[RMDB]
RNA sequence: GGGAACGACUCGAGUAGAGUCGAAAACCUCUAGUAUUCGUACUAGAGGCACAUGCCGCCCCAACGGCUUCCUGACGCGGCGGAUUCACUUUAAAUGGAGCAAAGCCGCUGUGUUCGCACAGCGGAAUCGUUAGAAGCGUUUCGACGCUUCUAACGAAAAAGAAACAACAACAACAAC
Reactivity to 2A3 in 0.01 (KOAc 150mM, MgCl2 10mM, bicine 150mM(pH8.5), 24C), signal-to-noise 1, nucleotides 027 to 126: c010c000u030c000u010a010g010u000a010u010u120c180g020u020a010c000u000a000g000a020g020g000c030a000c010a100u070g020c000c000g000c010c030c000c000a090a040c040g060g020c000u060u030c010c000u000g030a040c060g040c010g090g000c000g010g060a040u100u090c050a050c070u140u130u120a090a180a100u140g060g000a050g040c050a100a030a030g050c020c000g000c000u010g000u000g000u010u040c160g000c060a010c010a000g000c000g020g050a000a000
Reactivity to DMS in 0.01 (KOAc 150mM, MgCl2 10mM, bicine 150mM(pH8.5), 24C), signal-to-noise 1, nucleotides 027 to 126: c000c000u000c010u010a000g030u000a010u000u030c180g000u000a060c000u000a010g020a010g000g010c040a020c170a160u010g030c010c020g020c060c040c020c060a130a200c020g010g000c030u000u000c010c010u010g000a130c090g010c060g000g000c010g000g000a100u020u000c100a080c060u000u000u000a000a100a130u000g000g010a070g020c110a070a120a090g030c000c000g000c000u000g010u000g000u010u000c180g000c010a010c010a000g000c000g020g000a020a010
Structure probing data (2A3 and DMS) for a 177-nucleotide construct.
It was measured as part of the RMDB library M2PK50.
For DMS, 799 sequencing reads were counted.
Reactivities are given for positions 27 through 126.
The reactions ran in a buffer of 150 mM KOAc, 10 mM MgCl2 and 150 mM bicine (pH 8.5), at 24 C.